[RMDB]
RNA sequence: GGGAACGACUCGAGUAGAGUCGAAAAGAUUAAGUGGGAGCGUCGCCCUAUCGGUGCAUCGGAUAUUAAUUAGCCAGUGCGUGGCAAUACGCAUAUUGAUGUCUACUUUGGCGUAGACUUUGCCAAUUUAAGGAUUGAUGGGCAAUCCAGCCCUAGAAAUCGCCAUAUGAUUCGUCAUAUGGCGAUUAAAAGAAACAACAACAACAAC
Reactivity to 2A3 in 0.01 (KOAc 150mM, MgCl2 10mM, bicine 150mM(pH8.5), 24C), signal-to-noise 4, nucleotides 027 to 156: g050a020u180u140a130a100g040u080g030g030g010a060g030c010g020u020c020g030c000c000c000u110a210u300c050g000g000u040g000c000a010u040c030g050g010a000u000a050u190u140a180a080u120u080a060g030c020c010a060g030u030g010c020g000u000g000g030c060a040a040u100a020c020g000c020a010u040a090u040u150g090a070u090g000u000c000u000a030c030u050u110u220g050g000c050g000u000a030g010a020c000u030u020u050g000c000c000a030a000u070u110u100a130a050g030g010a030u010u010g020a010u020g010g000g000c000a000a000u010c000c010a000g000c020c000c000u020a010g080a020
Reactivity to DMS in 0.01 (KOAc 150mM, MgCl2 10mM, bicine 150mM(pH8.5), 24C), signal-to-noise 2, nucleotides 027 to 156: g000a160u000u000a070a130g050u000g000g040g000a100g010c060g030u010c020g000c030c010c050u000a070u010c050g010g010u000g020c060a050u010c000g010g010a070u000a040u000u000a060a150u000u000a070g010c010c040a070g040u000g000c000g020u000g030g000c010a110a200u000a030c010g020c030a080u000a090u000u010g030a120u000g010u000c020u000a040c030u010u000u010g020g010c090g030u000a060g010a040c050u000u000u010g020c040c010a050a070u000u010u000a110a100g040g020a110u000u000g010a110u000g030g020g030c010a050a080u010c110c090a150g040c000c000c020u020a080g020a070
Structure probing data (2A3 and DMS) for a 207-nucleotide construct.
It was measured as part of the RMDB library OK3TST.
The reactions ran in a buffer of 150 mM KOAc, 10 mM MgCl2 and 150 mM bicine (pH 8.5), at 24 C.
The 2A3 profile rests on 2,718 reads.